[RMDB]
RNA sequence: GGGAACGACUCGAGUAGAGUCGAAAAUUGACCUGAAUAUUGUGGCGCGCCAGCUCGACGCACAUGCCGCGGGUGAGCAUUUUUACCGCCCCUUUCGAUGCGGCAUAAGGGGUGAUGGUGUCACGUCACUAGGCACGUGGUUCGCCACGUGCCUAGUAAAAGAAACAACAACAACAAC
Reactivity to DMS in 0.01 (KOAc 150mM, MgCl2 10mM, bicine 150mM(pH8.5), 24C), signal-to-noise 2, nucleotides 027 to 126: u060u030g000a200c060c070u010g000a070a020u070a100u020u000g020u000g000g010c030g020c020g000c060c030a090g000c000u030c060g010a100c110g000c130a190c060a000u050g000c020c000g020c010g000g000g030u000g000a100g060c100a060u050u000u070u000u020a050c140c010g000c030c020c000c140u000u010u020c140g040a090u120g000c170g000g000c100a040u000a010a060g000g010g000g040u000g000a030u000g000g000u000g000u050c030a040c010g000u070c000
Reactivity to 2A3 in 0.01 (KOAc 150mM, MgCl2 10mM, bicine 150mM(pH8.5), 24C), signal-to-noise 3, nucleotides 027 to 126: u120u170g090a100c000c000u120g130a270a030u130a120u230u180g020u030g030g010c000g000c000g000c020c030a000g000c030u000c020g120a080c010g050c030a000c000a060u080g050c030c050g010c040g000g050g000u090g050a130g020c070a150u000u040u000u030u290a030c000c010g000c000c000c000c000u000u300u080c090g120a140u210g050c000g060g000c020a000u010a070a150g020g000g000g000u030g110a180u050g000g020u000g070u090c010a030c030g030u010c040

This 177-nucleotide RNA was probed chemically with DMS and 2A3. The data come from the RNA Mapping Database (RMDB), library OK1LIB. For DMS, 1,776 sequencing reads were counted.